[RMDB]
RNA sequence: GGGAACGACUCGAGUAGAGUCGAAAAUAAACAAUUUUAACUCUUUUUAAACGUUUUUACGUUCAAACUACCCAGUCAAAAUGAAUCCCUGCUCCUGCAACUGCUGCUCCGGCAACUGCAACAACUGGUAUUCACAGGGCUUCGGCCCUGUGAAUACAAAAGAAACAACAACAACAAC
Reactivity to 2A3 in 0.01 (KOAc 150mM, MgCl2 10mM, bicine 150mM(pH8.5), 24C), signal-to-noise 1, nucleotides 027 to 126: u220a010a070a010c110a080a090u000u000u190u300a090a020c040u000c000u040u130u050u110u280a030a030a080c040g040u000u000u000u160u300a030c030g030u000u000c050a090a080a120c030u180a130c030c000c000a000g090u010c000a000a000a160a300u010g030a110a010u000c000c000c000u000g070c070u010c090c030u000g050c080a120a000c000u090g000c120u000g000c000u030c050c000g000g010c000a010a040c040u040g000c000a030a090c000a000a110c090u040g050
Chemical mapping of a 177-nucleotide RNA with 2A3. The 2A3 profile rests on 262 reads. It was measured as part of the RMDB library RFM100.